The record gives the reactivity of an RNA of 177 nucleotides to 2A3 and DMS. Conditions: 150 mM KOAc, 10 mM MgCl2 and 150 mM bicine (pH 8.5), 24 C. In probing experiments dimethyl sulfate is read out at A N1 and C N3, which are open when not base-paired.
RNA sequence: GGGAACGACUCGAGUAGAGUCGAAAAUGCUUCGCCGCCACGGCGGCCGGGCCAACGCGCUUGAUGAUCUGGUCACGCCGCUGGCCCACAAGGCCACCGAUAUGCGCACUAGAGGAAACCAACGGCUGUACACGUGAAAUUUCGAUUUCACGUGUACAAAAGAAACAACAACAACAAC
Reactivity to 2A3 in 0.01 (KOAc 150mM, MgCl2 10mM, bicine 150mM(pH8.5), 24C), signal-to-noise 5, nucleotides 027 to 126: u100g020c000u030u040c020g010c040c020g000c020c010a040c020g010g010c010g000g010c010c020g000g010g010c010c000a010a010c010g070c030g010c020u020u030g010a040u030g060a140u170c100u270g120g020u010c010a010c030g020c010c000g000c020u000g000g000c000c030c000a020c040a010a040g020g000c000c010a010c010c010g060a080u050a060u230g080c060g000c030a030c060u080a030g000a010g030g070a070a020a010c010c010a040a070c020g070g000c030u040
Reactivity to DMS in 0.01 (KOAc 150mM, MgCl2 10mM, bicine 150mM(pH8.5), 24C), signal-to-noise 1, nucleotides 027 to 126: u000g050c030u010u000c070g010c050c130g000c020c210a170c030g020g000c050g000g000c000c040g000g000g040c000c060a010a050c030g040c290g000c000u000u000g050a060u000g000a160u050c240u000g010g000u030c020a050c100g000c050c000g000c040u000g030g000c010c000c000a070c110a000a200g010g020c000c000a030c010c000g020a150u000a040u030g000c070g040c040a030c100u010a090g000a090g020g000a090a100a190c020c010a130a150c010g010g000c050u010